Structure probing data (DMS and 2A3) for a 207-nucleotide construct. Values are in units of 0.01, from 0 to 300, in steps of 10.
RNA sequence: GGGAACGACUCGAGUAGAGUCGAAAAUGCUGAUGUGGACACUGGGGAUACAGCCGUGAACAAGCAGAGGAAGAUCCUGCCACCAAGCAGUUACCUUCUAGCACAGGAACAGUAGACCUAGCACAUGAUAAAUUGUGUAUUAUGGCAGAAGUGGAAGGUGAUUAUAUCUGUUCGCAGAUAUAAUCACAAAAGAAACAACAACAACAAC
Reactivity to DMS in 0.01 (KOAc 150mM, MgCl2 10mM, bicine 150mM(pH8.5), 24C), signal-to-noise 5, nucleotides 027 to 156: u000g010c020u010g050a120u000g010u000g020g000a130c060a080c070u000g010g020g010g000a210u000a080c030a120g030c020c030g040u000g020a110a090c090a080a140g000c020a120g020a170g000g010a090a070g020a060u000c230c020u000g000c000c020a120c160c120a090a160g030c020a050g010u000u000a050c020c020u000u000c030u000a090g030c060a100c050a060g000g000a050a060c050a090g010u000a080g020a100c030c010u010a100g020c020a040c020a050u010g010a130u000a050a070a150u000u000g040u000g010u000a120u000u000a070u000g010g020c060a080g000a130a120g010u000g000g000a100a100g000
Reactivity to 2A3 in 0.01 (KOAc 150mM, MgCl2 10mM, bicine 150mM(pH8.5), 24C), signal-to-noise 8, nucleotides 027 to 156: u090g000c030u050g000a080u070g020u060g050g020a020c020a010c100u040g030g000g000g010a020u050a100c040a030g030c020c030g050u070g050a090a070c050a120a030g040c020a020g040a040g040g010a050a030g010a030u050c010c000u020g000c010c010a120c030c020a090a020g020c000a000g000u020u060a070c010c000u010u020c030u050a020g010c030a030c030a100g030g040a110a030c020a040g040u070a020g030a040c010c010u020a010g030c010a020c010a030u070g030a070u200a120a160a070u120u060g010u000g010u030a070u170u060a070u100g040g000c010a010g020a170a010g030u060g040g020a030a010g100

The reactions ran in a buffer of 150 mM KOAc, 10 mM MgCl2 and 150 mM bicine (pH 8.5), at 24 C. For DMS, 10,253 sequencing reads were counted.